[RMDB]
RNA sequence: GGGAACGACUCGAGUAGAGUCGAAAAAAGCACUGUCCAGUUUUCACACUACUGAAAAGAGUGGUGCUGUCAAACAAAAACUUGGUUUCAACGAGUUUAAUAACUUGACUAAUUUGAGUAAGAAUAAGACCGAAAUUAUCACUCUGGUAUCCGAUGAAUUUACUGCACACUUCGGUGUGCAGUAAAUAAAAGAAACAACAACAACAAC
Reactivity to 2A3 in 0.01 (KOAc 150mM, MgCl2 10mM, bicine 150mM(pH8.5), 24C), signal-to-noise 2, nucleotides 027 to 156: a000a000g040c030a020c070u050g020u050c020c020a010g000u040u000u000u040c010a030c000a010c000u130a020c010u020g090a070a030a120a060g080a060g000u110g000g020u020g030c150u010g030u070c020a050a040a070c020a020a150a020a000a000c020u040u000g020g030u110u190u290c120a120a130c010g010a000g030u000u000u070a080a060u040a070a020c010u000u060g030a020c000u070a070a100u150u110u170g030a050g060u100a070a050g050a090a110u110a170a000g010a040c020c010g020a050a040a040u120u070a040u040c010a000c070u000c030u050g000g010u070a020u030c020c030g000a020u160g020a090
Reactivity to DMS in 0.01 (KOAc 150mM, MgCl2 10mM, bicine 150mM(pH8.5), 24C), signal-to-noise 1, nucleotides 027 to 156: a060a040g030c030a040c030u010g000u020c000c020a300g020u010u000u000u000c030a110c040a140c080u000a060c010u030g020a170a070a100a100g000a070g030u000g030g020u000g000c080u020g040u000c060a030a100a190c070a080a160a080a070a040c030u000u000g000g010u000u020u010c140a090a100c050g000a020g040u000u000u000a070a110u000a100a070c050u000u000g000a150c070u000a040a120u000u020u010g010a050g010u000a150a160g000a080a130u000a110a150g000a130c020c050g050a030a050a110u030u000a050u000c070a040c070u020c030u000g000g030u000a120u000c000c010g000a180u010g000a100

The data come from the RNA Mapping Database (RMDB), library OK3TST. Chemical mapping of a 207-nucleotide RNA with 2A3 and DMS. Values cover nucleotides 27 to 156. For 2A3, 598 sequencing reads were counted.